Source information: Chemical mapping of a 177-nucleotide RNA with DMS and 2A3. For DMS, 27,345 sequencing reads were counted. Reactivities are given for positions 27 through 126. DMS adducts were read by reverse transcription with MarathonRT.

RNA sequence: GGGAACGACUCGAGUAGAGUCGAAAACAUAGCUAUCAUCUGAGAUGUACCAGCAUGUCAAAUAGCAUUCGUGCCAUACUAUGAUAUGAUCAGAUGCAUCACGUGAUGAGUCACGGCACUGUAACAAGCCUGUUACGAGGUUCGCUUCGUGACAGGCAAAAGAAACAACAACAACAAC
Reactivity to DMS in 0.01 (KOAc 150mM, MgCl2 10mM, bicine 150mM(pH8.5), 24C), signal-to-noise 8, nucleotides 027 to 126: c050a070u030a100g010c010u010a070u000c010a010u000c020u000g000a070g000a010u000g000u000a050c080c050a130g000c010a010u000g010u000c010a010a090a070u000a090g010c010a070u010u030c140g010u000g010c020c040a100u010a050c130u010a160u000g000a010u000a000u000g000a050u040c070a080g010a060u010g010c020a010u000c020a170c030g010u030g000a000u000g000a030g020u010c190a090c160g010g000c000a070c080u010g010u010a060a100c180a070a120
Reactivity to 2A3 in 0.01 (KOAc 150mM, MgCl2 10mM, bicine 150mM(pH8.5), 24C), signal-to-noise 9, nucleotides 027 to 126: c010a020u070a010g000c010u020a000u020c000a000u000c010u020g020a010g000a050u010g010u030a100c140c030a020g030c000a000u010g010u010c010a010a050a090u040a030g000c010a020u050u040c120g040u020g000c010c010a080u080a180c050u060a050u090g010a020u010a010u050g050a070u190c070a110g100a170u140g020c000a020u030c010a010c070g090u070g010a020u010g020a010g040u010c040a000c070g010g010c010a010c070u080g040u130a120a070c050a120a020